[RMDB]
RNA sequence: GGGAACGACUCGAGUAGAGUCGAAAAAUCGUUGCGCAGGCGCUGAAGGGCGAGAGGCCCAGCAACGUGUUCAUCUACGGCUUGACCGGCACGGGCAAGACUGCCGUCACGCUAUACGUGCUGAGGAAACGAGGUGAGGAUUCGUCCUCACCUCGUUAAAAGAAACAACAACAACAAC
Reactivity to DMS in 0.01 (KOAc 150mM, MgCl2 10mM, bicine 150mM(pH8.5), 24C), signal-to-noise 3, nucleotides 027 to 126: a060u020c040g010u000u010g010c010g020c140a130g010g020c020g020c020u010g030a170a100g000g010g010c030g000a060g020a140g020g000c020c010c030a230g000c040a030a030c020g030u010g010u000u000c080a080u000c070u010a100c140g000g000c030u000u000g000a150c090c020g000g000c040a030c100g010g000g020c050a050a120g010a050c060u000g000c090c060g020u000c040a030c280g020c010u000a080u010a190c040g000u000g010c050u000g020a120g040g010a110
Reactivity to 2A3 in 0.01 (KOAc 150mM, MgCl2 10mM, bicine 150mM(pH8.5), 24C), signal-to-noise 2, nucleotides 027 to 126: a020u050c010g000u000u030g030c070g000c070a060g090g000c100g010c070u110g050a090a130g100g030g000c040g000a090g010a030g200g020c010c000c010a030g000c000a010a030c010g000u040g060u060u020c030a130u000c050u110a120c080g020g000c020u090u090g070a090c000c050g010g000c020a010c080g020g000g030c030a020a000g080a010c000u060g080c040c030g000u040c020a010c050g020c020u090a090u030a140c060g040u000g040c000u020g080a130g050g110a000
Structure probing data (DMS and 2A3) for a 177-nucleotide construct.
For 2A3 the reverse transcriptase was SuperScript II with manganese.
Source: RMDB library OK2TST, as collected in RNAgym.
For DMS the reverse transcriptase was MarathonRT.
The RNA was probed in 150 mM KOAc, 10 mM MgCl2 and 150 mM bicine (pH 8.5) at 24 C.
Reactivities are rounded to 0.1 and cut off at 0 and 3.
For 2A3, 1,952 sequencing reads were counted.